[RMDB]
RNA sequence: GGGAACGACUCGAGUAGAGUCGAAAAGGGAGGUAGGCGGGACGAUGACCUAGGACUGCAAGCAAAUCUCUUGGGUGGCAGGUUCCCCUGUGUGCUGUAGCAGAACUACAACCUCUCCCGCCGUUAGAGUAUAGGAUAGGUUCGCCUAUCCUAUACUAAAAGAAACAACAACAACAAC
Reactivity to 2A3 in 0.01 (KOAc 150mM, MgCl2 10mM, bicine 150mM(pH8.5), 24C), signal-to-noise 7, nucleotides 027 to 126: g050g030g020a060g040g070u190a080g010g020c010g010g000g000a020c140g050a060u050g020a020c010c010u000a010g000g020a020c010u020g000c020a020a060g010c010a020a140a240u100c080u020c040u140u070g040g010g000u120g050g020c080a070g030g100u130u130c010c010c010c010u020g050u020g030u030g040c010u020g020u060a040g000c010a000g010a050a010c000u020a010c020a040a070c010c010u000c000u000c000c000c000g010c000c000g000u000u030a030g000
Reactivity to DMS in 0.01 (KOAc 150mM, MgCl2 10mM, bicine 150mM(pH8.5), 24C), signal-to-noise 9, nucleotides 027 to 126: g010g010g010a080g020g020u000a090g010g020c010g010g010g010a020c180g020a040u000g010a110c290c240u000a020g000g010a200c020u000g020c030a120a060g000c040a050a090a120u010c080u000c080u010u010g010g010g020u010g010g000c050a070g000g010u010u000c040c020c000c050u000g010u000g010u010g010c050u000g010u010a110g010c020a030g010a030a260c020u000a020c060a050a140c200c110u000c010u000c010c000c000g020c010c010g000u000u000a050g000

This 177-nucleotide RNA was probed chemically with 2A3 and DMS. For 2A3 the reverse transcriptase was SuperScript II with manganese. Source: RMDB library OK2TRN, as collected in RNAgym. Conditions: 150 mM KOAc, 10 mM MgCl2 and 150 mM bicine (pH 8.5), 24 C. DMS adducts were read by reverse transcription with MarathonRT.